[RMDB]
RNA sequence: GGGAACGACUCGAGUAGAGUCGAAAACGUGUUAUGUUCGCAUAACACGAAAACCCCAUGCCGAACUCAGAAGUGAAACGCCGAAGCGCCGAUGGUAGUGUGAAACACAGCGGUUCGCCGCUGUGAACGUUCACAUUCAGUUCGCUGAAUGUGAACGAAAAGAAACAACAACAACAAC
Reactivity to 2A3 in 0.01 (KOAc 150mM, MgCl2 10mM, bicine 150mM(pH8.5), 24C), signal-to-noise 2, nucleotides 027 to 126: c000g030u000g000u010u000a000u020g010u030u050c150g010c110a000u000a000a000c000a000c000g000a010a000a000a000c000c020c010c000a020u110g040c020c020g020a070a060c020u030c060a100g000a140a000g110u060g090a120a080a030c080g000c010c020g070a070a020g060c040g000c040c020g070a030u050g020g040u020a080g040u010g010u010g110a030a050a010c000a000c000a000g000c000g000g040u050u050c200g000c030c000g000c000u020g000u010g020a010a010
Reactivity to DMS in 0.01 (KOAc 150mM, MgCl2 10mM, bicine 150mM(pH8.5), 24C), signal-to-noise 3, nucleotides 027 to 126: c020g020u000g000u000u000a000u000g000u020u020c140g030c000a010u000a000a000c000a010c000g000a040a050a140a190c050c010c000c080a090u020g020c050c030g000a080a070c080u000c080a090g050a100a080g010u000g000a030a080a110c070g000c030c030g000a100a120g010c040g020c060c050g000a080u000g030g000u010a040g030u000g000u000g010a060a080a170c000a000c000a010g010c010g010g010u000u020c170g000c010c000g000c010u000g010u010g000a040a070
Chemical mapping of a 177-nucleotide RNA with 2A3 and DMS. DMS adducts were read by reverse transcription with MarathonRT. The reactions ran in a buffer of 150 mM KOAc, 10 mM MgCl2 and 150 mM bicine (pH 8.5), at 24 C. Values cover nucleotides 27 to 126.